[RMDB]
RNA sequence: GGGAACGACUCGAGUAGAGUCGAAAACCUGCAUCCAAUGUCGAAGCAAUGGCGCAAUCCUAGGCAUCGGCAGUGUAGAAGCAAUGGCGUAGACCUCAGGCAUCGAGCAUGUGUAUCGGAGCAAGCACCUAGUUAUCUUCUUCGGAAGAUAACUAGGAAAAGAAACAACAACAACAAC
Reactivity to DMS in 0.01 (KOAc 150mM, MgCl2 10mM, bicine 150mM(pH8.5), 24C), signal-to-noise 4, nucleotides 027 to 126: c010c010u000g020c040a110u000c050c050a080a040u010g010u000c030g010a060a070g030c040a110a080u010g000g000c080g000c200a070a090u000c020c010u010a120g010g020c010a060u000c030g000g000c020a030g010u010g020u010a070g010a070a080g000c030a040a080u010g000g010c060g020u000a060g020a070c050c040u010c100a110g010g020c030a030u000c080g000a050g010c060a040u010g000u020g010u000a080u000c060g010g020a090g010c050a060a070g010c170a140
Reactivity to 2A3 in 0.01 (KOAc 150mM, MgCl2 10mM, bicine 150mM(pH8.5), 24C), signal-to-noise 3, nucleotides 027 to 126: c000c010u020g020c000a060u010c020c030a060a080u080g020u050c010g040a040a020g010c040a070a140u140g030g010c060g000c040a050a060u020c000c020u070a080g040g130c010a010u020c020g020g000c010a030g000u010g010u070a050g030a100a010g000c050a040a160u100g050g000c060g040u060a030g010a160c000c010u030c040a050g030g010c010a040u040c060g020a010g030c070a090u100g040u040g000u100a070u120c050g020g020a030g030c020a030a000g040c020a070